[RMDB]
This 177-nucleotide RNA was probed chemically with 2A3 and DMS.
For 2A3 the reverse transcriptase was SuperScript II with manganese.
For DMS the reverse transcriptase was MarathonRT.
RNA sequence: GGGAACGACUCGAGUAGAGUCGAAAACAAACCUCUUUACAACAAUGCCUGAAGUGGGGAGCAAAUAUCCGGAGCUGAUGUUUGAUUUUAAUAAGGGCCUUAACAUGUUCAUCAUGAACAAGGCUCAACUGUUCACAGCAUUCGUGCUGUGAACAGUAAAAGAAACAACAACAACAAC
Reactivity to 2A3 in 0.01 (KOAc 150mM, MgCl2 10mM, bicine 150mM(pH8.5), 24C), signal-to-noise 1, nucleotides 027 to 126: c050a000a160a120c040c000u180c080u140u180u240a060c070a200a050c010a050a200u300g050c040c000u050g060a100a100g110u010g020g000g110g000a000g010c030a000a060a150u130a050u000c030c060g120g000a060g000c150u060g000a030u040g130u000u160u000g030a080u000u010u040u030a240a150u110a140a200g000g000g030c010c000u000u100a050a030c000a050u040g000u270u300c040a180u070c000a000u130g000a000a010c130a010a000g000g000c000u000c000a000
Reactivity to DMS in 0.01 (KOAc 150mM, MgCl2 10mM, bicine 150mM(pH8.5), 24C), signal-to-noise 1, nucleotides 027 to 126: c120a050a120a050c090c000u000c000u030u000u020a100c140a160a130c080a000a090u000g040c080c000u000g000a090a030g080u000g050g010g000g020a190g010c060a000a000a030u000a010u000c000c040g050g010a040g010c070u030g000a050u010g010u030u000u000g000a050u000u000u000u080a050a070u050a080a030g000g000g050c000c020u000u000a100a300c010a000u000g000u040u090c250a170u000c030a000u000g020a060a070c030a000a060g000g000c000u000c000a000